[RMDB]
RNA sequence: GGGAACGACUCGAGUAGAGUCGAAAACUAAAUGCAGGACCACAGGAACCAGCUCUUCAGCUCCCGUGAGAUUUUGGCUGCCCAGGCCAGUUAGGGGUGUGGGCCUGCACGGCAGACAGUUAUCCCUUUCUAGUCUGGCUCGUGGGACUCUAGAGGAACCGAUCCAUAAUUUCGAUUAUGGAUCGGUAAAAGAAACAACAACAACAAC
Reactivity to 2A3 in 0.01 (KOAc 150mM, MgCl2 10mM, bicine 150mM(pH8.5), 24C), signal-to-noise 1, nucleotides 027 to 156: c010u050a080a040a060u100g010c010a000g000g010a030c010c010a050c040a010g030g080a080a080c100c000a030g040c020u040c000u030u010c020a030g030c170u000c010c000c000g000u100g010a010g010a060u170u200u200u170g060g000c020u040g030c040c000c000a000g010g010c010c010a000g000u000u020a010g000g000g030g040u060g020u000g010g000g000c000c000u020g000c000a000c000g090g050c040a090g020a200c030a070g020u140u120a100u100c000c000c020u000u000u010c040u010a020g040u000c010u020g000g000c030u000c000g010u000g000g010g000a020c040u000c000u010a060g110a000g020g090a020